[RMDB]
RNA sequence: GGGAACGACUCGAGUAGAGUCGAAAAUUGGGUUGGUUCCAAGUCUUUGCUAUUGUGAGUAGUGCCGCAAUAAACAUACGUGUGCAUGUGUCUUUAUAGCAGCAGGAUUUAUAUUCCUUUGGGUAUAUACUAGGUAAAGAUUCGUCUUUACCUAGUAAAAAGAAACAACAACAACAAC
Reactivity to 2A3 in 0.01 (KOAc 150mM, MgCl2 10mM, bicine 150mM(pH8.5), 24C), signal-to-noise 6, nucleotides 027 to 126: u080u050g030g020g020u020u100g100g030u080u000c010c000a030a020g040u010c040u060u120u050g000c000u010a030u070u110g050u020g050a030g010u110a010g010u040g010c000c010g010c030a040a090u140a180a170a010c070a060u170a080c100g040u030g050u100g050c010a010u070g100u030g050u060c010u010u190u050a080u020a040g010c010a000g010c030a010g040g030a000u020u110u030a110u050a020u060u100c020c000u040u070u120g130g020g050u030a090u020a010
Reactivity to DMS in 0.01 (KOAc 150mM, MgCl2 10mM, bicine 150mM(pH8.5), 24C), signal-to-noise 9, nucleotides 027 to 126: u000u010g010g010g010u000u010g010g010u000u000c020c030a070a110g010u000c030u000u010u010g010c030u000a040u000u010g020u000g010a050g010u000a190g010u000g010c060c020g020c030a080a080u010a060a080a100c210a100u000a060c150g020u000g010u010g010c050a030u000g010u010g010u000c040u000u000u010a040u000a050g010c030a040g010c100a050g000g000a050u000u000u000a050u000a120u020u000c010c020u000u010u010g020g010g000u000a070u000a120